[RMDB]
RNA sequence: GGGAACGACUCGAGUAGAGUCGAAAAGAUGGUGUUACACUGUUGGAAGAGGAAGCACUACCUUUACUGUGGUCUGGCCCCAAGCACUGUUUUGGUGAUGAGGGCAAGUACCUAUAGGGCAGUGUUUUACCGUUCGAACUUUCGAGUUCGAACGGUAAAAAGAAACAACAACAACAAC
Reactivity to 2A3 in 0.01 (KOAc 150mM, MgCl2 10mM, bicine 150mM(pH8.5), 24C), signal-to-noise 2, nucleotides 027 to 126: g090a020u080g000g080u070g000u120u040a010c110a020c040u010g000u100u040g100g090a230a110g120a150g090g040a020a000g030c020a000c010u020a010c010c000u040u040u070a080c050u040g040u030g020g010u010c000u000g150g010c000c000c000c000a070a190g060c000a000c000u040g110u300u140u250u300g040g000u000g000a000u000g060a300g050g000g000c000a000a030g080u120a060c000c000u010a030u100a040g020g020g040c010a000g010u000g070u000u010u000
The record gives the reactivity of an RNA of 177 nucleotides to 2A3.
The RNA was probed in 150 mM KOAc, 10 mM MgCl2 and 150 mM bicine (pH 8.5) at 24 C.
For 2A3 the reverse transcriptase was SuperScript II with manganese.